[RMDB]
RNA sequence: GGGAACGACUCGAGUAGAGUCGAAAAGAUAUGGAACGCCCACACAGCAACAGCUCGGAAACGAGACAUGCUGCGUGGUCAAUUCGCGUUCCUAAGUCAAAGGCGCUGGAGUUCGCUCCAGCGCCAACUGAUUGAUCAAGUUCGCUUGAUCAAUCAGAAAAGAAACAACAACAACAAC
Reactivity to 2A3 in 0.01 (KOAc 150mM, MgCl2 10mM, bicine 150mM(pH8.5), 24C), signal-to-noise 1, nucleotides 027 to 126: g000a010u070a070u130g000g000a000a000c010g010c000c010c000a000c020a010c000a020g000c000a020a070c000a190g050c000u010c020g010g090a110a050a050c010g020a010g050a040c000a060u060g010c000u010g030c000g000u010g010g000u170c040a010a230u250u170c090g000c000g000u010u040c000c000u000a000a020g020u050c010a030a040a220g020g000c000g000c040u030g000g000a050g010u060u180c190g160c140u000c020c000a000g000c010g010c000c010a000a000
Reactivity to DMS in 0.01 (KOAc 150mM, MgCl2 10mM, bicine 150mM(pH8.5), 24C), signal-to-noise 2, nucleotides 027 to 126: g010a040u010a300u000g000g000a020a010c010g010c020c010c010a000c010a030c000a010g050c000a040a100c260a150g020c010u000c010g000g010a080a120a220c010g000a000g040a060c090a130u000g000c000u000g000c040g010u010g000g000u010c180a060a180u010u020c210g020c000g010u000u000c000c000u000a010a080g010u000c090a060a140a110g000g010c010g040c000u000g000g000a030g030u000u020c260g000c000u000c000c000a020g010c000g010c000c000a000a000

The record gives the reactivity of an RNA of 177 nucleotides to 2A3 and DMS.
The reactions ran in a buffer of 150 mM KOAc, 10 mM MgCl2 and 150 mM bicine (pH 8.5), at 24 C.
Values cover nucleotides 27 to 126.
The 2A3 profile rests on 2,434 reads.
2A3 adducts were read by reverse transcription with SuperScript II with manganese.